An RNA of 177 nucleotides, treated with 2A3 and DMS and read out base by base. Reactivities are given for positions 27 through 126. The DMS profile rests on 4,706 reads. For 2A3, 2,944 sequencing reads were counted.
RNA sequence: GGGAACGACUCGAGUAGAGUCGAAAAUGAUAUGUUAGGAGUACACGCAAAUGUAAUCGCUUCAUGGAGAGAAAUGCAUGAAACAUGGAUGUUCAAAUCAGAUAACUAUUGGGGCACAGGCCAAGCCGGCCAUUAUGUAAUUCGUUACAUAAUGGCCAAAAGAAACAACAACAACAAC
Reactivity to 2A3 in 0.01 (KOAc 150mM, MgCl2 10mM, bicine 150mM(pH8.5), 24C), signal-to-noise 3, nucleotides 027 to 126: u120g010a030u060a020u220g070u060u080a060g000g020a030g030u040a010c040a020c000g060c020a020a060a030u070g010u100a040a070u060c040g000c070u030u030c070a050u090g060g050a080g000a010g030a090a070a080u080g000c020a020u030g050a070a050a010c030a030u060g080g030a040u050g040u080u060c020a000a040a110u060c020a040g030a140u090a100a020c060u070a050u130u110g020g010g020g000c020a040c040a090g070g000c040c010a010a000g070c020c000
Reactivity to DMS in 0.01 (KOAc 150mM, MgCl2 10mM, bicine 150mM(pH8.5), 24C), signal-to-noise 5, nucleotides 027 to 126: u010g010a080u010a040u010g010u000u010a070g020g010a090g030u000a050c070a040c090g000c110a040a120a150u000g010u000a060a060u010c070g010c050u000u000c030a040u000g000g000a090g020a130g010a060a080a050u000g020c040a040u000g010a040a050a070c060a050u000g000g010a060u000g000u000u000c080a040a080a050u010c090a090g000a120u000a040a070c090u000a090u000u000g000g010g000g010c060a050c110a040g000g000c040c100a050a100g020c140c140